[RMDB]
RNA sequence: GGGAACGACUCGAGUAGAGUCGAAAAUGAUCGAGAGAUCUAACGAUGUACGCGAGUCAACCGCACAGACUCGAGCGAAAGCUCGGUCGAAAGACCGCGUACAUCGGUCGGCAAGUGUGUAGUCAAAGGUAUAUCCUGAGUUCGCUCAGGAUAUACCAAAAGAAACAACAACAACAAC
Reactivity to DMS in 0.01 (KOAc 150mM, MgCl2 10mM, bicine 150mM(pH8.5), 24C), signal-to-noise 5, nucleotides 027 to 126: u010g010a020u000c010g010a250g000a230g010a000u000c000u010a090a130c000g010a010u000g010u000a000c000g020c000g010a060g020u000c000a070a100c100c080g010c160a110c110a210g000a000c000u000c010g020a010g010c000g020a100a090a170g000c000u000c000g000g000u000c000g000a090a090a130g000a010c000c010g020c000g000u000a000c000a000u000c000g010g010u000c090g000g010c090a060a090g000u010g030u000g010u000a070g010u000c030a050a130a140
Reactivity to 2A3 in 0.01 (KOAc 150mM, MgCl2 10mM, bicine 150mM(pH8.5), 24C), signal-to-noise 2, nucleotides 027 to 126: u090g020a010u010c040g000a010g010a000g010a080u000c010u030a080a030c000g000a000u000g010u000a000c000g010c000g050a070g030u010c030a040a090c080c050g000c060a080c010a080g010a000c030u050c220g010a010g000c010g040a140a000a000g000c000u000c010g000g000u010c020g000a020a010a000g000a010c000c000g000c010g000u000a010c000a020u010c000g000g020u070c050g020g030c050a070a060g100u080g000u030g050u180a050g050u080c080a110a080a040
Annotation: Structure probing data (DMS and 2A3) for a 177-nucleotide construct. High DMS reactivity at an A or C suggests that its Watson-Crick edge is free.